[RMDB]
RNA sequence: GGGAACGACUCGAGUAGAGUCGAAAACGAUAAGCAUUCGUGCUUAUCGACGGUACGAAAGUACAAAGGAGCAAAAGCAUCGGCUCCUAAAAUCGAUGCAAAAGACAACGGGGUUCGCCCCGUUGAAAUGCAGACGUAAAUUCGUUUACGUCUGCAUAAAAGAAACAACAACAACAAC
Reactivity to 2A3 in 0.01 (KOAc 150mM, MgCl2 10mM, bicine 150mM(pH8.5), 24C), signal-to-noise 2, nucleotides 027 to 126: c000g010a000u000a000a000g000c000a000u090u060c230g120u030g010c000u000u000a000u000c000g010a020c030g060g000u000a000c000g070a150a050a040g010u010a010c010a070a190a130g010g010a010g000c030a080a110a190a000g010c000a010u000c010g020g000c000u000c010c000u020a030a010a000a020u200c000g000a000u000g000c000a140a000a030a000g110a000c000a000a000c000g000g010g020g000u060u090c150g150c000c010c010c000g000u000u000g000a000a000
Reactivity to DMS in 0.01 (KOAc 150mM, MgCl2 10mM, bicine 150mM(pH8.5), 24C), signal-to-noise 2, nucleotides 027 to 126: c040g020a020u000a000a000g000c000a050u020u010c210g040u000g000c000u000u000a000u000c000g000a030c230g020g050u000a010c010g000a180a060a190g000u000a000c000a140a150a180g000g000a000g030c000a030a060a110a170g020c010a020u000c000g010g010c010u000c010c010u000a030a010a010a010u010c010g030a020u000g010c000a080a090a110a100g010a170c020a010a010c000g010g000g000g000u000u010c180g030c000c000c010c000g000u000u000g010a000a080
Source: RMDB library M2PK50, as collected in RNAgym. An RNA of 177 nucleotides, treated with 2A3 and DMS and read out base by base. The RNA was probed in 150 mM KOAc, 10 mM MgCl2 and 150 mM bicine (pH 8.5) at 24 C. The 2A3 profile rests on 3,375 reads. DMS (dimethyl sulfate) methylates the pairing face of unpaired adenines and cytosines.